[RMDB]
RNA sequence: GGGAACGACUCGAGUAGAGUCGAAAAUUGCAGCUCGGUGACAUUGACGAUAACGGCGGACGGCUGCUCGAGCGUCGCCCUCGUGAGGCUGUCCCGGAGCAGUGCAGAACUGCUGGAGUCAAGCGCAGAAUGGAAAUCAUUUCGAUGAUUUCCAUUCAAAAGAAACAACAACAACAAC
Reactivity to DMS in 0.01 (KOAc 150mM, MgCl2 10mM, bicine 150mM(pH8.5), 24C), signal-to-noise 9, nucleotides 027 to 126: u000u010g010c070a070g010c030u000c040g010g010u000g010a090c070a100u000u010g010a050c050g020a160u010a090a170c100g020g020c100g000g010a070c010g010g010c000u010g010c030u000c030g010a030g000c060g010u000c120g010c080c060c010u000c060g000u010g000a150g000g010c020u000g010u000c010c010c020g000g010a050g020c010a010g010u000g010c260a100g010a110a050c010u000g000c010u000g010g000a190g010u000c020a040a090g010c110g010c130a100
Reactivity to 2A3 in 0.01 (KOAc 150mM, MgCl2 10mM, bicine 150mM(pH8.5), 24C), signal-to-noise 6, nucleotides 027 to 126: u070u080g030c020a030g000c020u040c070g070g010u060g020a050c060a180u070u090g030a020c020g050a050u060a270a040c040g080g020c050g010g020a020c010g030g010c010u030g020c030u010c010g020a020g000c050g090u080c050g060c020c020c000u000c010g040u060g030a060g040g000c020u040g020u050c020c000c000g010g000a020g000c010a000g010u020g030c040a040g100a240a010c010u000g000c010u030g030g010a040g000u020c030a050a020g010c040g000c050a040
Overview: Conditions: 150 mM KOAc, 10 mM MgCl2 and 150 mM bicine (pH 8.5), 24 C. Structure probing data (DMS and 2A3) for a 177-nucleotide construct. 2A3 adducts were read by reverse transcription with SuperScript II with manganese. Values cover nucleotides 27 to 126.